Structure probing data (2A3) for a 177-nucleotide construct. The reactions ran in a buffer of 150 mM KOAc, 10 mM MgCl2 and 150 mM bicine (pH 8.5), at 24 C. For 2A3 the reverse transcriptase was SuperScript II with manganese.
[RMDB]
RNA sequence: GGGAACGACUCGAGUAGAGUCGAAAAGCACGUGGGUUCAGAUGAUGGGCCCGCAUCUGUACGAAAGUGAGACGAAAGUCCAGCCCACGUGCAUGAGCACGCGGGCCCCGUGCUCCACAGCAAAAGACGUCGUAAUCAGUUUCGACUGAUUACGACGAAAAGAAACAACAACAACAAC
Reactivity to 2A3 in 0.01 (KOAc 150mM, MgCl2 10mM, bicine 150mM(pH8.5), 24C), signal-to-noise 3, nucleotides 027 to 126: g010c010a000c010g010u020g000g000g030u060u090c020a020g010a010u020g000a040u060g000g000g000c000c000c000g010c000a000u000c000u030g030u080a050c060g110a130a060a050g060u070g040a110g010a040c000g050a180a040a020g010u000c000c000a010g000c000c000c000a000c000g000u010g000c010a020u020g010a000g000c000a000c000g010c100g010g000g000c000c000c000c000g000u000g000c000u000c000c010a180c040a030g130c060a050a070a020a050g110a050